Overview
An RNA of 177 nucleotides, treated with DMS and 2A3 and read out base by base. The data come from the RNA Mapping Database (RMDB), libraries RFM100 and RFMREP. As a SHAPE reagent, 2A3 marks flexible, mostly unpaired nucleotides at the ribose 2'-OH. Conditions: 150 mM KOAc, 10 mM MgCl2 and 150 mM bicine (pH 8.5), 24 C. The DMS profile rests on 997 reads. 2A3 adducts were read by reverse transcription with SuperScript II with manganese. For DMS the reverse transcriptase was MarathonRT.
RNA sequence: GGGAACGACUCGAGUAGAGUCGAAAAGUUAAAAUCACUUAUGGUUCGACAAGUUCACCGAUCGUGAUUUCAGGUUGAGGGACUAAAAAACGCCGUCAAUUCUGACCGCACUUUUCACAUAAAUAAACGUCAACUUUAACUUCGGUUAAAGUUGACGAAAAGAAACAACAACAACAAC
Reactivity to DMS in 0.01 (KOAc 150mM, MgCl2 10mM, bicine 150mM(pH8.5), 24C), signal-to-noise 1, nucleotides 027 to 126: g000u000u010a040a020a020a000u000c000a000c020u000u000a040u080g000g000u010u060c140g000a040c030a130a180g000u050u020c050a040c000c000g000a000u000c280g020u000g030a010u000u010u020c040a000g000g070u000u000g030a000g000g000g000a160c160u000a010a010a020a080a140a040c300g010c000c070g000u000c000a000a050u000u010c040u000g000a080c270c190g000c140a010c080u000u000u000u000c000a050c060a240u010a000a000a040u000a130a000a080
Reactivity to 2A3 in 0.01 (KOAc 150mM, MgCl2 10mM, bicine 150mM(pH8.5), 24C), signal-to-noise 4, nucleotides 027 to 126: g030u050u060a040a060a020a010u020c010a000c020u060u050a040u270g040g000u100u140c030g020a010c080a170a060g030u070u010c010a020c030c020g050a070u060c040g000u010g000a000u020u060u000c010a010g000g030u010u010g020a020g000g020g020a040c080u180a100a030a000a000a060a060c120g000c020c010g110u020c010a020a010u300u150c000u010g060a060c010c060g040c040a030c010u020u000u060u070c060a070c050a100u240a170a150a020u190a130a100a000